Description
Structure probing data (DMS and 2A3) for a 170-nucleotide construct. For DMS, 7,166 sequencing reads were counted. DMS adducts were read by reverse transcription with MarathonRT. Values are in units of 0.01, from 0 to 300, in steps of 10. For 2A3, 9,123 sequencing reads were counted. DMS (dimethyl sulfate) methylates the pairing face of unpaired adenines and cytosines.
RNA sequence: GGGAACGACUCGAGUAGAGUCGAAAAUCUCUAUUUUGUUAAAAAUCUUAACAACCUUCAUCGCGGGCAAGUGUUAGGGCACAUUGCUGCGACUGUUAGAUUGCAAGCUGGUUCUAACACCGAGUUUAUAGUCAGUUCUUCGGAACUGACAAAAGAAACAACAACAACAAC
Reactivity to DMS in 0.01 (KOAc 150mM, MgCl2 10mM, bicine 150mM(pH8.5), 24C), signal-to-noise 3, nucleotides 027 to 129: u050c000u000c030u060a090u010u110u020u040g020u010u090a010a050a030a140a110u060c060u010u090a060a000c040a000a000c150c120u000u000c110a000u030c130g050c160g030g050g020c040a000a000g010u000g030u010u040a000g000g010g060c010a050c100a110u030u160g040c020u040g000c030g050a050c070u050g030u070u040a030g020a090u020u040g000c060a060a120g030c090u020g010g080u030u040c020u050a020a060c040a040c050c040g000a030g000u000u000u000a040u000a160
Reactivity to 2A3 in 0.01 (KOAc 150mM, MgCl2 10mM, bicine 150mM(pH8.5), 24C), signal-to-noise 4, nucleotides 027 to 129: u000c010u000c000u030a140u040u200u000u070g030u020u010a000a040a060a090a100u110c060u040u020a010a020c020a000a040c020c000u080u080c080a170u060c030g040c050g040g010g000c090a130a020g040u000g020u010u020a010g000g020g000c040a000c040a230u020u090g030c010u020g000c000g000a000c020u010g030u070u000a170g020a300u070u040g000c020a090a010g000c020u030g000g010u010u000c000u000a000a010c000a010c020c020g000a000g010u050u060u050a120u040a020